[RMDB]
RNA sequence: GGGAACGACUCGAGUAGAGUCGAAAACACAGUUCCGGAUCGCCCACGAGGAUCGGCACGAUAUGGGUCUGCGACGGCAUGACGGGCAGUCCGGCAGCCGAAAGCACGUCCUUGGCACGUUGCGCCAGCAGGGAGCGUGAUUCGUCACGCUCCCUGCAAAAGAAACAACAACAACAAC
Reactivity to 2A3 in 0.01 (KOAc 150mM, MgCl2 10mM, bicine 150mM(pH8.5), 24C), signal-to-noise 2, nucleotides 027 to 126: c120a010c040a080g060u060u080c000c000g000g000a050u060c030g020c000c000c010a050c130g050a090g090g030a140u020c030g040g000c050a020c080g000a040u080a100u210g170g010g030u030c020u050g000c040g090a170c000g070g000c080a090u070g050a020c010g000g000g060c010a000g030u020c000c000g030g010c000a000g010c030c060g060a080a020a010g050c030a020c110g040u020c000c030u070u060g030g000c040a000c100g080u100u050g040c040g010c010c000a010
Reactivity to DMS in 0.01 (KOAc 150mM, MgCl2 10mM, bicine 150mM(pH8.5), 24C), signal-to-noise 1, nucleotides 027 to 126: c170a010c170a050g000u000u000c010c040g000g000a060u000c040g020c020c010c020a170c090g000a200g030g020a030u010c010g000g000c020a030c060g000a040u010a130u030g000g000g010u000c010u000g030c030g020a220c150g040g010c080a040u000g000a090c040g080g000g020c100a040g010u010c000c010g000g020c010a040g010c000c060g000a150a060a190g010c010a020c090g030u010c010c020u010u000g020g000c040a060c040g080u010u010g010c300g000c030c050a050